[RMDB]
RNA sequence: GGGAACGACUCGAGUAGAGUCGAAAACGGGCCCCCUCCCAGGAAUGGGAAUGGGGGGAGAUCGACCGGGUCCCGCAGAACCCGAUGGAGUUCCCAACCUUCCCCUUACGGACAAAAGCUGGUCCCGCAUUAACUUGAUCUUCGGAUCAAGUUAAUGAAAAGAAACAACAACAACAAC
Reactivity to DMS in 0.01 (KOAc 150mM, MgCl2 10mM, bicine 150mM(pH8.5), 24C), signal-to-noise 2, nucleotides 027 to 126: c050g000g000g010c000c000c000c000c030u000c000c000c010a020g000g080a140a080u020g010g000g000a070a020u040g030g000g010g010g010g000a030g020a080u000c080g010a060c030c020g000g000g020u010c050c020c150g010c160a140g010a110a090c020c010c010g010a040u000g000g000a100g010u010u010c000c000c000a140a130c070c050u010u010c010c000c010c080u000u000a090c080g010g020a080c090a040a060a100a110g000c100u020g000g000u000c000c020c050g000
Reactivity to 2A3 in 0.01 (KOAc 150mM, MgCl2 10mM, bicine 150mM(pH8.5), 24C), signal-to-noise 1, nucleotides 027 to 126: c010g030g060g000c020c000c010c000c000u070c040c000c000a030g030g130a120a070u050g000g000g000a010a060u180g050g000g000g000g020g010a040g030a010u110c040g050a040c030c010g010g020g020u010c030c040c010g050c020a050g020a090a050c040c010c030g020a060u100g090g010a060g020u060u040c000c010c050a010a090c020c030u050u060c030c010c000c000u030u060a020c050g000g040a000c030a030a110a000a000g000c010u010g000g010u010c000c010c000g060

Background: The record gives the reactivity of an RNA of 177 nucleotides to DMS and 2A3. The reactions ran in a buffer of 150 mM KOAc, 10 mM MgCl2 and 150 mM bicine (pH 8.5), at 24 C. Reactivities are given for positions 27 through 126. DMS adducts were read by reverse transcription with MarathonRT. For 2A3 the reverse transcriptase was SuperScript II with manganese. The DMS profile rests on 1,452 reads.